[RMDB]
RNA sequence: GGGAACGACUCGAGUAGAGUCGAAAAUAAACGAGCGUAAUCGCGUCUUGACGUGAGUGGGAUAGCCUAGACUGUAGGCUAUCGCAAGUGUGCAUAGCGCACAAUACGCUGAUCUACAGUCAAAGAAUCACGGAAUACCGUUCGCGGUAUUCCGUGAAAAAGAAACAACAACAACAAC
Reactivity to 2A3 in 0.01 (KOAc 150mM, MgCl2 10mM, bicine 150mM(pH8.5), 24C), signal-to-noise 2, nucleotides 027 to 126: u300a020a050a010c140g010a000g010c000g000u020a000a060u020c010g000c010g050u000c050u110u270g120a010c000g000u000g040a030g020u030g020g100g010a010u010a000g000c020c000u000a100g000a020c000u000g010u010a000g020g000c000u000a000u000c010g000c000a020a070g020u000g000u030g000c080a150u210a260g030c010g000c020a000c000a000a000u020a010c010g010c010u020g020a040u020c000u030a000c000a010g000u010c000a000a110a020g050a060a070
Reactivity to DMS in 0.01 (KOAc 150mM, MgCl2 10mM, bicine 150mM(pH8.5), 24C), signal-to-noise 2, nucleotides 027 to 126: u020a100a170a090c120g010a000g020c000g010u000a030a170u000c010g020c000g070u000c070u000u010g030a040c000g040u000g000a030g020u000g010g020g010a030u000a000g000c010c000u000a110g010a010c000u000g000u000a010g000g000c000u000a000u000c000g000c000a050a050g010u000g010u000g000c010a160u000a140g000c140g010c000a000c000a040a120u000a010c000g010c000u000g000a110u000c170u000a000c030a010g010u000c000a160a110a110g010a070a090
An RNA of 177 nucleotides, treated with 2A3 and DMS and read out base by base. It was measured as part of the RMDB library M2PK90. Values cover nucleotides 27 to 126.